[RMDB]
RNA sequence: GGGAACGACUCGAGUAGAGUCGAAAAGUUAUAUGGCCGGUCACAGCGCGUCGUACAAUCAACACUAGUCGUAGUUGGCUGCGCGUGUGUGGUUAGCCACGUGCAUGACUGCGCACAACGCUACGGUCAUGCGUAGCGCUGAUGUUGCACAUAGCUGGAGUGAAGGAGAAUUCGUUCUCCUUCACUCAAAAGAAACAACAACAACAAC
Reactivity to DMS in 0.01 (KOAc 150mM, MgCl2 10mM, bicine 150mM(pH8.5), 24C), signal-to-noise 1, nucleotides 027 to 156: g000u000u000a060u020a020u010g000g000c010c000g010g020u010c030a010c030a190g010c030g010c010g010u000c240g060u000a090c030a060a040u010c030a080a070c050a140c100u010a110g020u000c090g030u000a250g000u000u010g020g020c040u000g020c030g030c000g000u070g040u000g060u020g040g020u000u000a060g010c000c000a020c040g030u000g000c040a120u000g020a040c040u020g020c020g030c040a090c000a020a040c010g000c000u000a010c040g000g020u000c300a090u000g020c000g040u000a020g010c010g000c000u000g010a120u000g020u010u000g040c010a040c030a040u010a130g010c030u010g020
Reactivity to 2A3 in 0.01 (KOAc 150mM, MgCl2 10mM, bicine 150mM(pH8.5), 24C), signal-to-noise 5, nucleotides 027 to 156: g110u130u040a130u030a040u220g020g000c010c020g000g000u000c000a000c010a030g010c000g000c010g020u060c040g030u090a230c070a040a080u140c060a090a080c060a060c130u280a080g170u260c110g060u040a060g030u030u030g040g000c000u020g000c010g010c010g010u040g120u020g010u000g020g040u020u010a010g010c010c000a020c030g040u030g000c000a010u010g010a080c060u050g010c000g000c000a010c010a050a000c000g000c000u030a010c010g080g060u160c120a050u140g070c010g000u000a000g000c010g010c010u030g030a220u020g070u060u300g010c010a010c010a020u010a050g000c030u060g070